[RMDB]
About this RNA
Chemical mapping of a 207-nucleotide RNA with DMS and 2A3. 2A3 adducts were read by reverse transcription with SuperScript II with manganese. The data come from the RNA Mapping Database (RMDB), library OK3TST. For DMS, 7,814 sequencing reads were counted. Conditions: 150 mM KOAc, 10 mM MgCl2 and 150 mM bicine (pH 8.5), 24 C. The 2A3 profile rests on 5,134 reads.
RNA sequence: GGGAACGACUCGAGUAGAGUCGAAAAAGCCAUCAGAGCCUCCAGCAAUAUCACCCAUACGGGGUCGUGUGCACGUGUCAGAUGACCGUUACUUUGUGGUGUGUAACCAACCACACACUGUCCGUUCGACACGGGCAGUCUAUCCAGCCGGUGAGGAGUUAGUGGAGUAAUUCGUUACUCCACUAACAAAAGAAACAACAACAACAAC
Reactivity to DMS in 0.01 (KOAc 150mM, MgCl2 10mM, bicine 150mM(pH8.5), 24C), signal-to-noise 3, nucleotides 027 to 156: a090g020c010c000a060u000c040a080g000a150g010c020c000u000c050c010a110g000c040a080a120u010a110u000c060a080c020c010c020a200u000a140c090g020g000g000g020u000c040g030u000g000u000g010c020a080c050g000u000g000u000c050a150g000a090u000g010a050c030c040g030u000u010a060c110u010u010u000g020u000g000g020u010g020u000g000u010a100a180c170c110a140a140c020c010a040c000a060c150a030c010u000g010u000c020c060g000u000u010c110g000a140c140a060c010g000g010g020c000a020g020u000c040u010a090u010c040c040a090g000c020c050g030g030u000g020a110g030g020a200
Reactivity to 2A3 in 0.01 (KOAc 150mM, MgCl2 10mM, bicine 150mM(pH8.5), 24C), signal-to-noise 6, nucleotides 027 to 156: a000g030c050c000a050u080c060a030g040a030g090c000c020u040c040c030a020g020c050a080a050u050a040u200c030a050c010c000c040a040u110a170c090g010g010g000g030u020c040g020u060g030u040g030c020a010c080g080u110g040u050c020a020g030a170u100g000a080c000c040g020u050u070a060c060u090u120u170g040u050g040g000u030g010u020g040u050a030a030c030c010a020a010c000c010a010c000a000c000a000c020u000g000u000c000c020g010u070u150c060g050a050c040a010c090g000g000g000c000a000g000u000c000u020a060u010c020c020a010g050c020c020g050g010u040g030a080g040g050a090